About this RNA
Chemical mapping of a 207-nucleotide RNA with 2A3 and DMS. The reactions ran in a buffer of 150 mM KOAc, 10 mM MgCl2 and 150 mM bicine (pH 8.5), at 24 C. It was measured as part of the RMDB library M2RFPK. 2A3 adducts were read by reverse transcription with SuperScript II with manganese. For DMS, 5,871 sequencing reads were counted.
[RMDB]
RNA sequence: GGGAACGACUCGAGUAGAGUCGAAAAGCAACGCAAAGCCGCGGCAAGUGGAGUUAGCGAGAAGAGACUAGGCUUUGGUUUCUUCAAGUGAAGCGGUCACCAAUCAGGUGUGGUAGUUACGGUAAAAAUAACCGCUCUUUGUUCGCAAAGAGCGGAACACUAACUAUGGGUUCGCCCAUAGUUAGUGAAAAGAAACAACAACAACAAC
Reactivity to 2A3 in 0.01 (KOAc 150mM, MgCl2 10mM, bicine 150mM(pH8.5), 24C), signal-to-noise 4, nucleotides 027 to 156: g020c020a030a050c060g010c070a080a050a030g000c010c010g020c020g040g010c060a070a080g040u080g060g060a080g020u130u100a010g030c020g020a050g010a030a000g000a000g000a010c020u030a040g060g230c030u150u130u070g010g010u030u020u010c000u000u010c020a040a010g010u030g060a060a010g010c020g010g040u040c020a020c030c010a020a100u160c060a040g000g050u040g010u040g050g020u070a070g020u050u090a050c070g040g040u100a050a040a020a030a030u110a060a080c000c000g000c000u000c000u000u000u010g010u040u060c150g000c110a000a000a000g000a000g000c000g000g000a000a000
Reactivity to DMS in 0.01 (KOAc 150mM, MgCl2 10mM, bicine 150mM(pH8.5), 24C), signal-to-noise 3, nucleotides 027 to 156: g020c030a060a060c020g030c030a040a100a110g030c050c040g030c000g010g000c040a070a100g020u010g020g010a100g010u000u000a270g060c010g000a300g010a040a030g010a060g010a060c010u000a050g020g010c170u010u000u000g020g010u000u000u000c000u010u010c020a040a300g010u010g010a100a160g000c030g030g020u000c020a080c040c030a030a100u020c120a040g000g000u000g030u010g010g030u000a070g000u000u000a040c070g000g010u010a010a050a050a090a100u010a070a170c010c010g020c010u000c000u000u000u000g020u000u010c290g020c030a000a040a010g000a020g030c000g030g000a000a020